[RMDB]
RNA sequence: GGGAACGACUCGAGUAGAGUCGAAAAAUUGAUACUGGAUUGUGGCAUCAAAGUGGGGUUCAAUUCAACGUUGAGCGUGAGAAUAUUGCUGAAUAUAUCGAUCAGCUCUCACAGCAACUGUUCGAUACGCCGGCAGCAAUAUCAGAUGCCGACGGGAGUUAUCUCUCAUAUUCGUAUGAGAGAUAACAAAAGAAACAACAACAACAAC
Reactivity to DMS in 0.01 (KOAc 150mM, MgCl2 10mM, bicine 150mM(pH8.5), 24C), signal-to-noise 2, nucleotides 027 to 156: a130u000u000g010a120u000a050c030u000g000g020a130u010u000g030u010g030g030c010a070u010c050a080a040a160g020u000g000g020g000g000u000u000c030a060a100u000u000c030a060a090c050g020u010u000g000a130g030c040g030u020g040a160g010a120a100u010a040u000u000g010c010u000g010a140a090u000a100u000a080u000c050g010a050u000c010a020g010c000u000c030u000c160a110c150a060g000c040a000a020c030u000g000u000u000c020g010a060u000a050c000g020c050c040g010g000c000a030g010c020a030a060u000a110u010c090a160g020a100u000g000c000c000g020a020c020g000g020g010a220
Reactivity to 2A3 in 0.01 (KOAc 150mM, MgCl2 10mM, bicine 150mM(pH8.5), 24C), signal-to-noise 6, nucleotides 027 to 156: a000u120u100g050a060u070a160c040u060g040g050a100u100u070g030u050g050g000c030a020u040c060a130a100a080g100u100g020g010g000g010u040u030c020a060a080u110u050c040a030a030c040g020u020u040g020a040g060c030g010u050g030a060g010a080a030u110a070u100u090g010c000u000g010a070a010u170a030u030a030u160c040g030a020u010c020a000g010c010u010c010u000c010a100c030a040g020c010a170a300c020u010g000u020u010c020g010a010u010a060c080g030c050c030g060g000c010a010g000c000a020a040u030a050u140c040a050g090a190u050g010c000c000g010a010c010g020g030g030a140